[RMDB]
RNA sequence: GGGAACGACUCGAGUAGAGUCGAAAACAUCAUCCCUUCGGGGAUGAUGAAAGAUCGAAAGAUCAGGCUUACCGUAAUAUGCCAAAAUACGAGCGAAACGCAAAAGACCUGUGUUCGCACAGGUCAACUUAUCGUUGCUCUUCGGAGCAACGAUAAGAAAAGAAACAACAACAACAAC
Reactivity to 2A3 in 0.01 (KOAc 150mM, MgCl2 10mM, bicine 150mM(pH8.5), 24C), signal-to-noise 1, nucleotides 027 to 126: c000a000u000c000a000u000c000c000c000u000u010c160g060g000g010g000a000u000g000a020u010g000a030a020a010g000a000u000c000g010a040a060a020g000a000u000c010a010g020g010c000u050u080a110c060c000g010u030a040a060u070a060u250g080c040c000a120a060a050a040u160a030c050g020a050g060c040g050a200a120a000c050g000c060a050a060a060a050g000a000c010c000u000g010u000g070u050u050c230g010c100a020c000a000g020g000u000c000a010a000
Reactivity to DMS in 0.01 (KOAc 150mM, MgCl2 10mM, bicine 150mM(pH8.5), 24C), signal-to-noise 1, nucleotides 027 to 126: c060a010u000c000a010u020c000c000c000u000u020c190g010g020g030g050a000u000g000a010u000g000a010a020a020g000a000u000c000g010a110a040a130g000a020u000c020a100g000g000c000u000u000a100c120c100g020u000a040a090u000a050u010g040c000c010a050a090a020a100u010a020c030g020a200g030c100g020a040a100a070c210g000c100a090a110a100a070g000a040c000c020u000g030u000g020u010u010c180g010c000a020c000a000g040g000u000c000a010a050